Chemical mapping of a 207-nucleotide RNA with 2A3 and DMS. The RNA was probed in 150 mM KOAc, 10 mM MgCl2 and 150 mM bicine (pH 8.5) at 24 C.

RNA sequence: GGGAACGACUCGAGUAGAGUCGAAAAAUAGGCUCUCCAACCCAACUCCUACUCAAUACGUCCUCGUCGUACAGAACGGUAACAUUUUUUCCGAACAUCCGCGCUUGGGUAUACGAGUAUACACCUUACAGCACCACUUACUUCGGUAAGUGGUGAACUAUAUUGUACGCUUCGGCGUACAAUAUAGAAAAGAAACAACAACAACAAC
Reactivity to 2A3 in 0.01 (KOAc 150mM, MgCl2 10mM, bicine 150mM(pH8.5), 24C), signal-to-noise 5, nucleotides 027 to 156: a010u140a040g000g040c020u010c000u030c070c010a060a050c030c000c010a030a040c030u050c030c010u030a030c020u040c050a050a100u080a120c040g080u050c040c000u030c030g110u040c020g010u080a050c040a070g050a110a030c030g020g030u110a130a080c110a220u100u070u030u040u100u070c030c030g020a050a030c020a090u080c040c030g050c000g020c070u040u050g000g010g030u040a020u020a060c070g000a010g040u020a020u040a050c080a050c010c010u070u120a070c030a080g020c000a030c000c000a000c010u010u000a000c000u010u040c070g090g000u000a000a010g000u000g000g010u000g000a000a000
Reactivity to DMS in 0.01 (KOAc 150mM, MgCl2 10mM, bicine 150mM(pH8.5), 24C), signal-to-noise 1, nucleotides 027 to 156: a190u000a060g010g010c020u000c040u000c040c040a110a090c060c010c000a070a090c040u010c000c000u000a030c030u000c040a040a070u000a110c040g010u000c020c020u020c000g000u000c060g000u000a090c070a100g090a030a150c020g000g080u000a040a110c100a080u000u000u000u000u000u000c020c060g000a090a070c050a100u000c030c000g020c040g030c030u000u010g060g000g040u000a040u000a040c070g010a090g030u000a130u000a040c030a020c040c030u030u010a090c060a120g050c010a010c000c000a020c000u000u000a000c000u010u000c270g070g010u000a010a000g020u010g000g030u000g000a000a050